[RMDB]
RNA sequence: GGGAACGACUCGAGUAGAGUCGAAAACGUUUAUGACAGCGUCAGGCGUGGCACUGGCGACAGCCGCGAACCUCGGGUGCAGUUCAACAGCGCCCUCAGAGCGGUAGAGGAGGAGCUCCGACAGCUGCACUGAUUCGAUGUUCGCAUCGAAUCAGUGAAAAGAAACAACAACAACAAC
Reactivity to 2A3 in 0.01 (KOAc 150mM, MgCl2 10mM, bicine 150mM(pH8.5), 24C), signal-to-noise 2, nucleotides 027 to 126: c030g040u090u120u080a270u190g070a050c050a070g050c030g050u010c020a010g030g000c090g130u160g100g000c110a010c090u010g090g000c020g030a030c020a010g080c010c010g050c030g030a080a080c040c010u030c100g010g020g000u000g000c040a110g020u100u150c010a110a110c020a100g010c000g010c050c020c000u010c040a040g010a000g010c010g020g050u020a050g020a040g070g000a030g030g040a040g000c040u010c060c030g050a070c030a040g010c020u040g010
Reactivity to DMS in 0.01 (KOAc 150mM, MgCl2 10mM, bicine 150mM(pH8.5), 24C), signal-to-noise 3, nucleotides 027 to 126: c100g020u010u000u020a090u020g010a110c030a080g020c080g010u000c030a050g010g000c080g010u000g000g000c060a120c050u000g000g010c020g010a130c120a200g010c070c070g000c020g030a080a070c060c040u000c150g030g020g020u000g010c000a080g020u020u010c140a090a160c160a080g000c040g010c010c000c010u000c040a040g020a190g010c000g000g030u010a060g000a130g000g000a050g000g020a230g010c000u000c030c030g000a110c190a050g000c020u000g010